[RMDB]
This 177-nucleotide RNA was probed chemically with DMS and 2A3. The 2A3 profile rests on 4,947 reads. The RNA was probed in 150 mM KOAc, 10 mM MgCl2 and 150 mM bicine (pH 8.5) at 24 C. In probing experiments dimethyl sulfate is read out at A N1 and C N3, which are open when not base-paired. It was measured as part of the RMDB library TTRDEL. Reactivities are given for positions 27 through 126. For DMS the reverse transcriptase was MarathonRT.
RNA sequence: GGGAACGACUCGAGUAGAGUCGAAAAGAUAUGGAAUUGACAAGAGGUAGGGCAAUGGUCGGAAACGACUGACCCUACUACCCACCUUGGAGAUUCCUAAGUCAAAACCUUCACUUCGGUGAAGGAAGAUACGGAUACGGUUCGCCGUAUCCGUAUCAAAAGAAACAACAACAACAAC
Reactivity to DMS in 0.01 (KOAc 150mM, MgCl2 10mM, bicine 150mM(pH8.5), 24C), signal-to-noise 3, nucleotides 027 to 126: g000a060u000a300u010g000g000a040a000u000u000g010a300c000a000a020g050a090g000g020u000a020g010g010g010c040a150a060u020g010g000u010c000g010g000a060a060a110c000g000a010c010u000g010a080c010c000c020u000a000c010u000a040c100c010c100a300c130c000u000u010g000g000a300g000a020u010u040c000c000u000a020a030g000u000c050a080a080a130a060c000c020u000u000c000a010c000u000u000c220g040g030u000g000a030a010g000g000a050a030
Reactivity to 2A3 in 0.01 (KOAc 150mM, MgCl2 10mM, bicine 150mM(pH8.5), 24C), signal-to-noise 2, nucleotides 027 to 126: g000a010u020a040u130g010g000a010a020u010u030g020a030c010a010a010g030a010g020g040u010a000g040g020g000c060a070a140u230g070g020u010c010g000g030a080a060a050c020g000a000c030u040g070a060c010c000c000u000a010c000u000a010c000c030c020a110c010c030u000u010g000g000a050g000a030u010u000c000c030u010a140a010g060u010c030a010a040a090a230c000c000u000u010c010a030c020u040u130c300g100g000u000g000a000a000g000g000a000a040